[RMDB]
RNA sequence: GGGAACGACUCGAGUAGAGUCGAAAAUGUUGCCCCUGGCCUUGGUGUGUUGCCGGAUGUAGUACGGUUUGCUGGUAGGUUGUCUGAAAAGAACUGGGGUCCGGGGCAUGAGCGUGCUGAGCAGCUCCAGUGGGAAACUUUUCGAAGUUUCCCACUGAAAAGAAACAACAACAACAAC
Reactivity to DMS in 0.01 (KOAc 150mM, MgCl2 10mM, bicine 150mM(pH8.5), 24C), signal-to-noise 2, nucleotides 027 to 126: u000g020u000u000g020c010c000c000c030u000g000g000c010c010u000u000g010g020u000g010u020g010u000u010g040c200c030g000g000a090u010g000u010a090g030u020a110c060g010g010u000u000u010g030c030u000g020g010u000a070g020g020u010u010g000u000c040u000g010a070a100a110a110g000a100a060c010u010g000g000g000g020u000c010c110g000g000g010g010c000a010u000g000a000g010c020g000u010g020c080u000g010a130g010c010a150g000c020u000c020
Reactivity to 2A3 in 0.01 (KOAc 150mM, MgCl2 10mM, bicine 150mM(pH8.5), 24C), signal-to-noise 1, nucleotides 027 to 126: u110g030u040u020g020c010c030c000c050u000g010g010c000c000u010u040g000g000u010g050u030g080u090u110g010c020c040g020g000a090u150g030u090a060g080u030a040c050g030g050u030u070u150g050c020u100g110g010u050a070g050g000u050u110g110u080c030u000g060a030a080a010a040g050a060a020c010u050g000g000g000g030u000c030c000g010g020g000g020c000a000u000g000a010g000c060g040u030g010c030u120g090a030g050c000a020g060c000u040c030

Source: RMDB library OK2TST, as collected in RNAgym. This 177-nucleotide RNA was probed chemically with DMS and 2A3. In probing experiments dimethyl sulfate is read out at A N1 and C N3, which are open when not base-paired. DMS adducts were read by reverse transcription with MarathonRT. 2A3 adducts were read by reverse transcription with SuperScript II with manganese. Conditions: 150 mM KOAc, 10 mM MgCl2 and 150 mM bicine (pH 8.5), 24 C. Reactivities are given for positions 27 through 126.